[RMDB]
RNA sequence: GGGAACGACUCGAGUAGAGUCGAAAACAAAAUCGUCUCUUAAAAGGGCAAUUAAAGAAGGCGAUUUGAGUGCAUCAGGGGGAUGCAUUUACUGCGGGCUCCGAGCCUUGGUUGGAGAAGGGCGUGAACCUAACCGUCCUUUCGAGGACGGUUAGGUAAAAGAAACAACAACAACAAC
Reactivity to 2A3 in 0.01 (KOAc 150mM, MgCl2 10mM, bicine 150mM(pH8.5), 24C), signal-to-noise 2, nucleotides 027 to 126: c040a000a030a000a000u000c010g000u020c010u000c000u090u030a160a300a030a000g170g140g030c170a140a100u270u150a020a000a050g100a070a000g010g000c010g000a000u040u000u070g020a030g010u090g020c010a020u020c060a110g030g000g050g000g080a000u010g060c000a020u090u060u120a160c000u080g070c050g020g010g020c050u080c020c030g040a040g020c000c000u110u070g050g020u110u060g060g000a080g040a110a060g020g000g000c020g050u040g060a050
Reactivity to DMS in 0.01 (KOAc 150mM, MgCl2 10mM, bicine 150mM(pH8.5), 24C), signal-to-noise 2, nucleotides 027 to 126: c100a100a000a030a000u000c010g000u000c000u000c030u020u010a010a070a090a110g010g010g050c190a080a120u010u010a030a010a050g010a010a010g020g000c020g000a040u020u000u030g000a160g030u030g000c000a000u020c050a180g030g020g000g030g030a080u040g020c030a020u010u000u000a060c150u010g020c050g010g000g020c030u010c080c030g000a130g020c020c040u000u000g000g010u050u000g020g000a090g000a030a020g000g010g000c140g000u000g000a030
Background
Structure probing data (2A3 and DMS) for a 177-nucleotide construct. The RNA was probed in 150 mM KOAc, 10 mM MgCl2 and 150 mM bicine (pH 8.5) at 24 C. For DMS, 2,497 sequencing reads were counted.